[RMDB]
RNA sequence: GGGAACGACUCGAGUAGAGUCGAAAAGACGAAAAUUUACACUAGGGUUAGGAUACACAUUAAUAGUAUUUACUCUAAAUCUGGGUCUAGCCCGGAUUCACCCCGGAUGGGGUAAAUCUAUCCGAUACAAUAAACACAACUUCGGUUGUGUUUAUUGAAAAGAAACAACAACAACAAC
Reactivity to DMS in 0.01 (KOAc 150mM, MgCl2 10mM, bicine 150mM(pH8.5), 24C), signal-to-noise 3, nucleotides 027 to 126: g010a130c110g000a030a040a080a080u010u000u010a060c040a090c090u000a040g010g000g010u000u000a050g010g010a040u000a020c020a090c150a150u000u000a080a110u010a100g000u000a040u000u000u000a030c020u000c010u000a000a060a080u000c040u000g000g010g000u000c110u020a130g000c000c010c010g010g000a020u000u010c060a100c030c000c010c010g030g010a080u000g040g000g000g020u000a000a010a010u000c010u010a040u010c050c040g000a150u000a170
Reactivity to 2A3 in 0.01 (KOAc 150mM, MgCl2 10mM, bicine 150mM(pH8.5), 24C), signal-to-noise 3, nucleotides 027 to 126: g050a020c060g100a040a080a090a120u140u170u120a080c060a020c060u040a000g000g010g070u030u090a080g020g030a040u040a030c040a000c030a100u200u300a150a120u130a220g020u010a050u000u060u060a010c000u010c010u020a070a090a100u050c020u060g000g040g040u010c070u030a050g050c000c000c000g000g000a000u020u020c040a040c020c010c000c020g010g090a050u140g030g000g000g000u020a000a040a000u040c010u010a030u000c020c010g000a010u020a130
Structure probing data (DMS and 2A3) for a 177-nucleotide construct. It was measured as part of the RMDB library OK2TST. Conditions: 150 mM KOAc, 10 mM MgCl2 and 150 mM bicine (pH 8.5), 24 C.